An RNA of 177 nucleotides, treated with 2A3 and DMS and read out base by base.
DMS adducts were read by reverse transcription with MarathonRT.
Reactivities are given for positions 27 through 126.
The reactions ran in a buffer of 150 mM KOAc, 10 mM MgCl2 and 150 mM bicine (pH 8.5), at 24 C.
[RMDB]
RNA sequence: GGGAACGACUCGAGUAGAGUCGAAAAAUGCGUACGCAGUACUCAUGUCAUGCCAUGUCAUACGCGCUAGCACGACGCGUACGAUCUGCGAGUGUCCAUGACUGCGCACAUGGCUAGACAGAUGCAGCGAUUUACUAUGGUUCGCCAUAGUAAAUCGAAAAGAAACAACAACAACAAC
Reactivity to 2A3 in 0.01 (KOAc 150mM, MgCl2 10mM, bicine 150mM(pH8.5), 24C), signal-to-noise 9, nucleotides 027 to 126: a000u100g020c030g040u060a040c110g000c080a030g040u050a050c040u020c070a170u040g010u010c000a010u090g000c010c000a010u010g020u070c040a070u070a210c070g000c000g010c060u080a030g040c030a020c090g160a040c020g010c000g010u030a050c070g030a110u060c030u100g020c020g030a050g070u100g020u040c050c030a070u170g070a090c050u060g040c000g000c010a000c000a020u000g000g000c000u010a050g010a010c010a010g020a030u110g020c020a020g080
Reactivity to DMS in 0.01 (KOAc 150mM, MgCl2 10mM, bicine 150mM(pH8.5), 24C), signal-to-noise 9, nucleotides 027 to 126: a070u000g010c060g010u000a070c060g020c050a110g020u000a080c130u000c050a110u000g010u000c010a230u000g000c010c010a020u000g010u010c170a090u010a060c090g010c000g000c020u010a090g010c100a080c200g010a080c040g000c000g010u000a020c070g010a100u000c130u000g010c020g010a120g010u000g000u000c070c100a090u010g010a080c050u000g000c020g010c030a120c030a020u000g000g010c010u000a250g010a030c020a040g010a090u000g010c050a120g010